[RMDB]
RNA sequence: GGGAACGACUCGAGUAGAGUCGAAAACGUUGACGCUGGGAGCAUGAGAACAUCUACAGUGCCGUUGAAAUACUGAAGCGCGCACGGUAUGGAGGCACUGCUAGAUGACAUGCUCCUGUGCUGAAGCGCGCACGGCAACCGAAAGGUGCGAUAUAAACCGAUGUUAGGUGUUCGCACCUAACAUCGGAAAAGAAACAACAACAACAAC
Reactivity to 2A3 in 0.01 (KOAc 150mM, MgCl2 10mM, bicine 150mM(pH8.5), 24C), signal-to-noise 1, nucleotides 027 to 156: c050g010u020u090g070a030c000g000c020u000g020g040g000a000g000c000a000u010g010a020g070a270a100c000a000u020c000u010a030c000a000g000u000g010c010c010g160u260u030g010a010a010a000u020a010c010u010g060a230a040g010c000g020c010g000c010a010c000g030g000u020a020u020g030g000a020g020g020c000a000c010u000g000c010u000a010g000a000u000g000a020c000a000u000g010c000u000c000c000u000g000u000g000c000u000g000a050a030g000c000g010c000g000c010a000c020g000g000c010a010a010c000c000g050a070a060a040g030g000u000g010c000g020a020u020a020u020a180a090a030
An RNA of 207 nucleotides, treated with 2A3 and read out base by base. The data come from the RNA Mapping Database (RMDB), library RNAMAK. The RNA was probed in 150 mM KOAc, 10 mM MgCl2 and 150 mM bicine (pH 8.5) at 24 C.